Source: RMDB library 15KREP, as collected in RNAgym. Chemical mapping of a 177-nucleotide RNA with DMS and 2A3. The DMS profile rests on 20,082 reads. High DMS reactivity at an A or C suggests that its Watson-Crick edge is free. The RNA was probed in 150 mM KOAc, 10 mM MgCl2 and 150 mM bicine (pH 8.5) at 24 C. DMS adducts were read by reverse transcription with MarathonRT. Values are in units of 0.01, from 0 to 300, in steps of 10.
RNA sequence: GGGAACGACUCGAGUAGAGUCGAAAAAGAGCUAUGCCUAAUAUGUGUAGAAUCUUCGCUUCACUCAUAUUAGCUCGUAAACAUGGCACUUGUUGUACUACAAGGGACAGAUUUUAUCGCUUGGCAACAAUUAAGACUAGUUCGCUAGUCUUAAUUGAAAAGAAACAACAACAACAAC
Reactivity to DMS in 0.01 (KOAc 150mM, MgCl2 10mM, bicine 150mM(pH8.5), 24C), signal-to-noise 9, nucleotides 027 to 126: a050g000a070g010c010u000a020u010g010c060c010u000a030a020u000a010u000g010u000g000u000a110g030a020a020u000c110u010u010c250g010c280u000u010c010a060c010u000c000a010u000a010u000u000a010g000c080u010c080g010u000a060a050a120c300a080u000g000g010c010a080c060u000u000g010u000u000g010u010a080c140u000a060c020a020a020g000g000g010a030c060a050g010a170u000u000u010u000a050u000c080g010c080u000u000g010g010c060a080a140
Reactivity to 2A3 in 0.01 (KOAc 150mM, MgCl2 10mM, bicine 150mM(pH8.5), 24C), signal-to-noise 9, nucleotides 027 to 126: a000g050a000g000c010u020a010u080g000c000c000u000a020a010u010a010u020g020u010g010u050a120g030a020a020u060c080u150u140c170g040c090u010u020c010a000c010u000c000a000u010a000u010u030a000g000c020u020c040g040u060a020a030a010c040a050u020g010g000c030a010c030u010u020g020u020u030g070u110a070c050u010a020c020a010a010g020g010g030a010c020a050g110a090u050u080u070u110a060u050c040g010c150u010u030g020g000c010a030a030